[RMDB]
RNA sequence: GGGAACGACUCGAGUAGAGUCGAAAAGAACACGUCUCGGGACGACGCUAAACUCGCCCUGGACGGGAUGGGUUUAACGACCCCUCGGGUUUCCUAGUUCCUAAAACUAGGUGGUGGAGUCAUAUAAAAAACUUCUACACGUUCGCGUGUAGAAGAAGGAAUAUAAAUACUUCGGUAUUUAUAUUCCAAAAGAAACAACAACAACAAC
Reactivity to 2A3 in 0.01 (KOAc 150mM, MgCl2 10mM, bicine 150mM(pH8.5), 24C), signal-to-noise 2, nucleotides 027 to 156: g050a050a000c060a000c060g020u000c000u030c020g040g010g040a110c290g010a010c020g060c200u070a000a070a030c010u000c000g020c020c000c020u050g070g030a010c030g000g010g000a040u130g010g040g010u020u030u040a090a030c030g020a020c000c000c020c000u010c010g030g000g000u010u030u030c000c010u030a020g000u030u040c010c040u080a060a030a000a000c000u010a020g050g000u020g030g040u070g020g080a090g060u110c090a060u110a000u300a200a080a010a040a030a040c000u000u000c000u010a000c000a000c000g010u020u040c220g030c010g100u000g000u010a000g010a000a000g000a010a000
Reactivity to DMS in 0.01 (KOAc 150mM, MgCl2 10mM, bicine 150mM(pH8.5), 24C), signal-to-noise 1, nucleotides 027 to 156: g000a100a170c030a050c000g010u010c010u000c010g060g000g040a020c000g040a090c040g070c050u000a090a100a070c170u000c000g010c000c010c000u010g010g000a080c050g010g000g010a070u010g000g020g000u000u020u000a200a140c200g010a070c050c020c010c040u000c050g000g000g000u000u000u000c010c000u000a040g010u010u000c040c010u000a070a090a010a040c030u000a030g000g020u000g020g010u000g010g030a190g000u000c020a100u000a160u030a020a090a080a120a080a090c010u010u000c010u010a010c010a020c000g020u020u010c300g040c020g010u000g000u000a000g020a000a000g060a060a060